[RMDB]
RNA sequence: GGGAACGACUCGAGUAGAGUCGAAAACGUAUUGACCUAGCCAAGGAUUAUAAGAAAGCUGUUGAAGCAGAAGCCAAGGAAGUGCGUACACGACUUGAAAAGGCAAACAGUCCAUUUACAGCAUUGAUUGAUGAAUGGAAUGAGAAACGCGCUAAAACUGGGAAUAGGUUUUCGAACCUAUUCCCAGAAAAGAAACAACAACAACAAC
Reactivity to 2A3 in 0.01 (KOAc 150mM, MgCl2 10mM, bicine 150mM(pH8.5), 24C), signal-to-noise 3, nucleotides 027 to 156: c030g040u050a060u040u110g070a050c000c000u020a000g020c010c030a090a040g040g020a090u160u100a060u220a240a100g050a160a070a010g000c040u050g030u190u180g110a030a010g000c030a010g020a100a010g050c030c020a060a020g060g000a070a050g050u010g020c010g020u020a030c030a040c130g030a000c000u000u040g050a030a000a080a040g070g000c070a070a080a010c010a030g040u000c000c000a010u000u030u080a050c040a030g030c080a080u130u230g090a220u180u070g060a130u090g010a030a000u020g000g010a030a030u040g000a020g050a040a160a010c070g050c010g010c050u030a020a060a040a080
Reactivity to DMS in 0.01 (KOAc 150mM, MgCl2 10mM, bicine 150mM(pH8.5), 24C), signal-to-noise 2, nucleotides 027 to 156: c060g020u000a080u000u000g010a110c030c020u000a080g010c020c030a120a170g040g000a150u020u020a120u000a070a210g010a090a190a220g070c020u000g040u010u020g030a080a110g010c010a100g000a170a070g020c010c020a100a050g000g010a140a090g000u000g050c030g000u050a150c060a140c030g030a020c040u000u000g000a070a080a180a080g000g020c030a030a080a180c010a080g010u030c010c010a050u000u000u000a070c010a070g030c070a180u000u020g010a190u000u000g000a070u010g040a030a050u000g000g000a060a070u000g010a140g010a090a050a090c020g000c010g080c010u010a020a030a030a110

Background
The record gives the reactivity of an RNA of 207 nucleotides to 2A3 and DMS. For DMS the reverse transcriptase was MarathonRT. Reactivities are rounded to 0.1 and cut off at 0 and 3. For 2A3 the reverse transcriptase was SuperScript II with manganese. The DMS profile rests on 2,463 reads. The RNA was probed in 150 mM KOAc, 10 mM MgCl2 and 150 mM bicine (pH 8.5) at 24 C.